[RMDB]
Annotation
Source: RMDB library OK3TST, as collected in RNAgym. This 207-nucleotide RNA was probed chemically with 2A3. 2A3 adducts were read by reverse transcription with SuperScript II with manganese.
RNA sequence: GGGAACGACUCGAGUAGAGUCGAAAAUCAUUAACAUUUAUUACUGACCAAAGGCCACCAACUUGGAGAUGCUGUUAUUGCCCUGGUCCCCUGUGGUUCAUAGUGAGCCACAGAUCAGCAGCUCCUGCAUCAUUCAGCAGCUUGUUAGAAAGGUUGAACUCAAAAUUUUAUUCGUAAAAUUUUGAGUAAAAGAAACAACAACAACAAC
Reactivity to 2A3 in 0.01 (KOAc 150mM, MgCl2 10mM, bicine 150mM(pH8.5), 24C), signal-to-noise 1, nucleotides 027 to 156: u060c000a010u080u230a130a030c060a070u130u240u290a030u030u200a180c000u040g020a000c010c010a040a070a030g000g000c030c000a020c060c140a000a160c040u070u040g020g000a040g000a100u070g020c040u000g010u250u030a140u100u050g000c010c000c000u010g020g050u010c020c020c020c120u010g000u000g000g000u060u000c000a070u210a130g200u240g110a000g000c000c000a010c000a000g000a000u030c060a000g000c000a010g030c000u050c040c000u010g020c000a060u080c040a080u280u050c010a040g060c000a010g080c080u030u050g060u100u100a120g120a120a030a000g150g000u170u230g030a080